[RMDB]
RNA sequence: GGGAACGACUCGAGUAGAGUCGAAAAAUUCUUGGUUAUCGUAAUGUACCAGUUAAUAAAGAUGCCAUUGCUAAACAUGUAGCAGAUACGAUGCCAGUCAUUCAACAAGUGUUUAUUGAUAUUAGGGGAGGUUGUCUUUGUUCGCAAAGACAACCUCAAAAGAAACAACAACAACAAC
Reactivity to 2A3 in 0.01 (KOAc 150mM, MgCl2 10mM, bicine 150mM(pH8.5), 24C), signal-to-noise 1, nucleotides 027 to 126: a000u000u000c000u300u200g030g050u300u150a080u000c000g000u000a010a010u050g000u000a050c000c000a160g110u080u140a220a220u220a300a220a200g300a050u300g000c000c240a050u000u090g000c010u030a000a000a000c050a000u300g050u140a050g000c000a000g000a000u140a110c000g000a000u000g000c000c000a000g000u000c140a110u240u110c090a000a000c000a180a180g000u000g050u270u050u050a050u000u220g000a000u000a140u300u170a150g110g000g000
The record gives the reactivity of an RNA of 177 nucleotides to 2A3. The RNA was probed in 150 mM KOAc, 10 mM MgCl2 and 150 mM bicine (pH 8.5) at 24 C.